[RMDB]
Overview:
An RNA of 207 nucleotides, treated with DMS and 2A3 and read out base by base. The RNA was probed in 150 mM KOAc, 10 mM MgCl2 and 150 mM bicine (pH 8.5) at 24 C. DMS adducts were read by reverse transcription with MarathonRT.
RNA sequence: GGGAACGACUCGAGUAGAGUCGAAAACCCAGUUCCGGGGCCGUUCACUGGAUCCGAAGCAUCUAGAAGGAUAAUAUAGGCACUCCAUACCCUACUCCGACUCAAUACGUCCCCGUCGUACAGAAUGCAAGGGCAUCCCUGUUCGCAGGGAUGCCAACUGUGUACAACUGUUCGCAGUUGUACACAGAAAAGAAACAACAACAACAAC
Reactivity to DMS in 0.01 (KOAc 150mM, MgCl2 10mM, bicine 150mM(pH8.5), 24C), signal-to-noise 1, nucleotides 027 to 156: c050c010c000a140g000u010u020c030c000g010g040g010g000c010c050g000u000u040c070a120c150u010g060g000a030u000c040c020g030a080a080g000c060a050u030c060u000a130g020a130a070g020g000a070u000a050a120u010a190u000a090g030g030c080a070c050u020c070c060a130u000a050c050c060c020u000a100c030u000c000c020g010a030c040u010c010a090a090u000a130c080g000u000c000c000c020c040g040u010c020g000u000a120c090a080g020a200a210u000g010c040a090a160g000g020g040c000a020u000c000c020c010u000g030u010u000c300g030c030a030g020g020g020a000u000g000c000c000a000a020
Reactivity to 2A3 in 0.01 (KOAc 150mM, MgCl2 10mM, bicine 150mM(pH8.5), 24C), signal-to-noise 2, nucleotides 027 to 156: c000c000c030a000g070u060u050c020c000g000g000g000g000c010c030g040u040u120c100a070c060u100g050g000a060u000c050c080g130a030a020g020c040a030u020c010u050a070g050a150a110g110g030a000u000a300a060u150a060u170a110g040g000c020a020c140u040c010c010a060u090a190c000c000c000u010a060c040u000c010c000g080a070c010u020c090a090a090u070a060c000g010u010c000c040c000c030g060u030c020g020u010a060c050a090g120a210a140u180g070c040a050a110g100g000g010c010a000u000c020c000c010u030g020u010u050c130g010c070a000g000g000g040a000u000g020c000c000a010a000